[RMDB]
RNA sequence: GGGAACGACUCGAGUAGAGUCGAAAACGGCGGCCGUGUUGAUCAAUCCACAGAUAUGGCUGACGCGCGGCGGCUAGCAGAUGAGAGUUAGGCGCAUAGUCUGGCAGGCCGGGGCGAUAGGCUUGCACCACCCUCAACAAUUCGUUGUUGAGGGUGGAAAAGAAACAACAACAACAAC
Reactivity to DMS in 0.01 (KOAc 150mM, MgCl2 10mM, bicine 150mM(pH8.5), 24C), signal-to-noise 2, nucleotides 027 to 126: c030g000g000c040g000g010c020c000g000u000g010u000u030g020a110u000c010a060a070u000c010c030a070c180a190g010a110u040a150u030g000g010c250u010g010a010c050g000c030g050c050g000g010c010g020g030c020u000a040g040c090a050g010a080u020g000a120g010a040g030u010u010a030g010g030c010g020c110a040u020a040g010u000c010u020g020g010c020a030g030g030c030c010g000g000g000g000c070g000a030u000a070g010g010c020u020u030g010c030a230
Reactivity to 2A3 in 0.01 (KOAc 150mM, MgCl2 10mM, bicine 150mM(pH8.5), 24C), signal-to-noise 4, nucleotides 027 to 126: c000g000g000c000g080g000c000c000g020u020g010u080u260g090a280u000c000a020a100u050c000c020a050c030a080g150a110u120a050u150g010g000c020u020g010a020c000g010c000g000c000g000g000c020g050g030c010u040a020g070c030a010g010a130u150g010a010g000a020g120u070u130a070g030g010c030g000c070a060u040a020g030u030c020u050g070g010c010a020g030g000c010c030g020g010g000g010c040g030a020u060a080g020g000c000u000u000g000c000a000

Chemical mapping of a 177-nucleotide RNA with DMS and 2A3. The 2A3 profile rests on 3,400 reads.